[RMDB]
RNA sequence: GGGAACGACUCGAGUAGAGUCGAAAAGAUUAUGUGGGAGAUGCGCCCGGUCGUGUCACUGGAAACAGAAUUGCGAGUCGCUCGCGCUAGCGAUAUUGAUGUGUACAGUAGCGUACACUGUGCUACUUUAAGGUAUUAUGACGAUACCACGUCAAAAGCAUUAUAUGAGUUUCGACUCAUAUAAUGCAAAAGAAACAACAACAACAAC
Reactivity to DMS in 0.01 (KOAc 150mM, MgCl2 10mM, bicine 150mM(pH8.5), 24C), signal-to-noise 3, nucleotides 027 to 156: g010a130u010u000a050u010g000u010g020g010g010a120g010a090u000g000c070g020c050c040c080g010g020u000c020g020u020g010u000c050a070c080u010g000g000a150a100a190c060a050g010a080a090u000u000g030c020g010a080g000u000c020g020c030u000c020g010c070g030c030u010a040g020c040g010a060u000a100u000u010g020a050u000g020u000g030u010a070c090a080g000u000a080g020c070g030u010a090c070a080c050u010g020u000g030c030u000a030c040u000u010u000a090a110g010g020u000a020u010u000a100u000g010a110c120g010a070u000a030c020c030a090c060g000u000c080a020a050a120a250
Reactivity to 2A3 in 0.01 (KOAc 150mM, MgCl2 10mM, bicine 150mM(pH8.5), 24C), signal-to-noise 8, nucleotides 027 to 156: g040a030u160u150a060u190g050u100g010g030g010a090g010a050u050g010c020g020c040c040c030g020g000u070c040g020u010g030u050c020a020c080u030g010g060a030a080a030c040a040g100a130a110u110u140g030c020g010a020g030u030c010g010c030u010c000g070c030g030c090u040a010g010c010g020a010u020a060u100u110g060a070u050g020u000g020u060a010c000a050g060u070a020g060c030g050u040a040c040a020c060u070g050u070g050c010u020a030c020u070u090u100a090a040g020g000u050a060u100u030a090u140g050a010c030g000a000u030a040c010c020a030c040g030u030c010a030a050a010a020

Annotation:
Source: RMDB library OK3TST, as collected in RNAgym. This 207-nucleotide RNA was probed chemically with DMS and 2A3.